[RMDB]
RNA sequence: GGGAACGACUCGAGUAGAGUCGAAAAGAUAUGGAUACUGGUGCCAGCUCCUCUCGGAAACGAGAGAAGAGCGGUAAUACCAGAUCCUAAGUCAAAACCGCACUCUAGGUUCGCCUAGAGUGCGGAAGUAGUACAUUGAGUUCGCUCAAUGUACUACAAAAGAAACAACAACAACAAC
Reactivity to 2A3 in 0.01 (KOAc 150mM, MgCl2 10mM, bicine 150mM(pH8.5), 24C), signal-to-noise 5, nucleotides 027 to 126: g020a030u070a020u140g010g000a020u180a300c010u010g010g000u030g050c070c060a110g000c030u000c010c000u000c010u000c000g010g040a060a060a040c010g010a010g010a000g050a170a080g000a000g000c020g000g050u080a120a050u070a060c000c010a000g000a000u000c000c010u000a130a020g040u020c040a000a010a100a160c000c000g000c010a000c000u000c000u000a010g070g040u070u060c290g100c080c000u000a010g000a000g010u000g000c000g000g000a000a010
Reactivity to DMS in 0.01 (KOAc 150mM, MgCl2 10mM, bicine 150mM(pH8.5), 24C), signal-to-noise 4, nucleotides 027 to 126: g000a040u010a300u000g000g010a010u000a080c000u000g000g020u000g000c040c020a100g030c000u000c010c000u000c000u000c000g020g010a090a040a150c000g000a020g000a020g010a030a040g010a010g030c050g000g010u010a040a120u000a120c010c000a010g000a040u000c000c010u010a030a120g000u010c030a080a040a090a150c000c000g000c000a010c000u000c000u000a000g000g010u000u020c240g020c010c000u000a010g000a010g010u000g000c000g000g000a000a030